Conditions: 150 mM KOAc, 10 mM MgCl2 and 150 mM bicine (pH 8.5), 24 C. An RNA of 177 nucleotides, treated with 2A3 and DMS and read out base by base. The data come from the RNA Mapping Database (RMDB), library TTRDES.

[RMDB]
RNA sequence: GGGAACGACUCGAGUAGAGUCGAAAAGAUAUGGACCAGGGUGUGAGCGACGAAGUAGUUCGGAAACGAACUACAGAGCUCCCACCUGGUCCUAAGUCAAAACAGGUAAUGCUUCGGCAUUACCUGAGUUUGUGAUGGUCUUCGGACCAUCACAAACAAAAGAAACAACAACAACAAC
Reactivity to 2A3 in 0.01 (KOAc 150mM, MgCl2 10mM, bicine 150mM(pH8.5), 24C), signal-to-noise 1, nucleotides 027 to 126: g010a020u080a040u200g000g010a000c000c000a020g150g190g030u050g050u050g000a010g000c020g300a300c010g020a180a040g000u010a010g000u020u000c020g040g030a040a120a010c020g010a000a000c010u000a000c000a010g000a020g080c020u000c030c000c000a030c010c020u000g010g000u000c010c000u000a000a000g000u000c020a130a000a000a060c010a010g000g020u010a010a000u000g000c050u220u280c300g230g000c000a010u010u010a060c010c000u010g000a000
Reactivity to DMS in 0.01 (KOAc 150mM, MgCl2 10mM, bicine 150mM(pH8.5), 24C), signal-to-noise 1, nucleotides 027 to 126: g000a090u000a300u010g010g000a030c020c000a020g000g000g030u070g020u010g000a000g000c030g000a250c300g000a210a110g000u020a000g020u000u020c000g020g000a100a050a250c010g000a000a010c000u000a000c000a020g000a260g030c010u000c030c100c020a060c010c000u000g000g010u000c000c010u000a000a110g000u000c020a100a060a120a160c000a020g000g040u000a000a010u000g010c000u020u020c270g000g000c000a000u000u000a000c000c000u000g000a000
Reactivities are rounded to 0.1 and cut off at 0 and 3.
For DMS the reverse transcriptase was MarathonRT.